Chemical mapping of a 177-nucleotide RNA with DMS and 2A3. For DMS the reverse transcriptase was MarathonRT. The 2A3 profile rests on 748 reads. The RNA was probed in 150 mM KOAc, 10 mM MgCl2 and 150 mM bicine (pH 8.5) at 24 C.

[RMDB]
RNA sequence: GGGAACGACUCGAGUAGAGUCGAAAAAUACAGCGUAAUCGAGCGGAGGAAAACGGCACUGCGAAAAUCCGGUACGAUUAUGAUCCCACUGCGUCGACGCUAGAUGCAGAACCGGAUUGCCGAGGAAAGGAGAGAGGUAGUUCGCUACCUCUCUCCUAAAAGAAACAACAACAACAAC
Reactivity to DMS in 0.01 (KOAc 150mM, MgCl2 10mM, bicine 150mM(pH8.5), 24C), signal-to-noise 1, nucleotides 027 to 126: a070u000a130c130a110g030c010g000u000a130a090u000c040g030a110g020c040g010g010a100g010g000a040a120a090a160c000g010g000c060a060c200u060g020c020g000a160a090a060a010u000c000c000g000g000u010a150c050g000a020u000u020a020u020g000a050u000c000c000c010a300c030u010g000c000g050u000c000g010a130c260g060c160u010a120g030a000u010g000c030a050g020a130a040c020c010g010g000a010u000u000g000c030c000g010a090g000g010a050a130
Reactivity to 2A3 in 0.01 (KOAc 150mM, MgCl2 10mM, bicine 150mM(pH8.5), 24C), signal-to-noise 1, nucleotides 027 to 126: a000u060a030c020a030g040c030g000u030a050a010u000c020g000a010g110c100g060g100a120g080g040a000a100a000a070c030g030g030c030a030c100u300g080c070g030a070a000a000a080u010c000c030g000g090u100a070c070g010a000u080u030a030u230g070a070u020c040c030c000a010c000u000g040c000g000u050c010g030a110c110g000c300u060a030g000a010u040g050c010a000g020a040a040c000c000g030g000a010u040u060g060c000c020g060a110g010g110a110a120